[RMDB]
RNA sequence: GGGAACGACUCGAGUAGAGUCGAAAAUAUGGUAGGUAGUAAUUCCCAAACUCUAGCAUGCAUCACGAUCACUGGGGGUCUCCCUAAAAUGCACAUUCUGCCUGAGCAGGUCCAGGGUGGAGCAUGAGAUUCUGCAUUUCUUUUUUCACCUAGGCUAACCUACCUGACGAUUCGUCGUCAGGUAGGUAAAAGAAACAACAACAACAAC
Reactivity to 2A3 in 0.01 (KOAc 150mM, MgCl2 10mM, bicine 150mM(pH8.5), 24C), signal-to-noise 1, nucleotides 027 to 156: u240a100u070g030g040u050a100g000g000u000a030g030u060a040a150u000u050c000c010c040a000a030a020c050u070c040u040a020g020c000a020u050g000c070a050u080c130a090c060g070a070u040c000a020c150u050g040g000g000g050g050u070c070u100c010c000c000u090a120a110a000a030u070g030c050a000c020a000u070u000c020u030g000c030c000u140g080a070g030c070a040g000g060u040c070c000a020g000g060g010u010g020g010a090g030c030a010u040g040a040g000a080u100u040c000u020g000c000a100u020u150u020c100u110u230u070u010u010u040c030a040c040c000u040a060g000g070c020u000a070